An RNA of 207 nucleotides, treated with 2A3 and read out base by base. Source: RMDB library OK3TST, as collected in RNAgym. For 2A3, 653 sequencing reads were counted. For 2A3 the reverse transcriptase was SuperScript II with manganese.

[RMDB]
RNA sequence: GGGAACGACUCGAGUAGAGUCGAAAACAUUAUGAGGGGUUCGCCUCAGCGAGCUUGGCAUAUCACAACACGCAGCUGCAAGCUGAAGAGCUACUACGUUUGUGACAUCUCUGAAGCAGACUGGUCCUGUUUGCCUGCUGGCAACUACGGCGGCUACCCACAUUUUACCCUUCGGGGUAAAAUGUGGAAAAGAAACAACAACAACAAC
Reactivity to 2A3 in 0.01 (KOAc 150mM, MgCl2 10mM, bicine 150mM(pH8.5), 24C), signal-to-noise 2, nucleotides 027 to 156: c020a020u200u230a140u300g080a100g000g050g000g000u000u150c020g000c000c020u040c000a010g010c010g000a010g000c030u110u160g040g000c000a040u030a040u160c090a050c040a010a120c010a010c050g040c020a030g050c000u150g070c080a070a060g040c020u030g040a130a000g080a020g040c030u040a040c010u050a100c040g010u050u090u060g050u020g050a030c020a270u050c030u020c030u040g040a030a010g010c060a060g010a110c010u080g110g000u050c010c010u020g040u050u070u130g030c000c010u070g110c040u050g110g000c000a080a010c020u130a000c000g000g000c000g010g020c000u060a040c000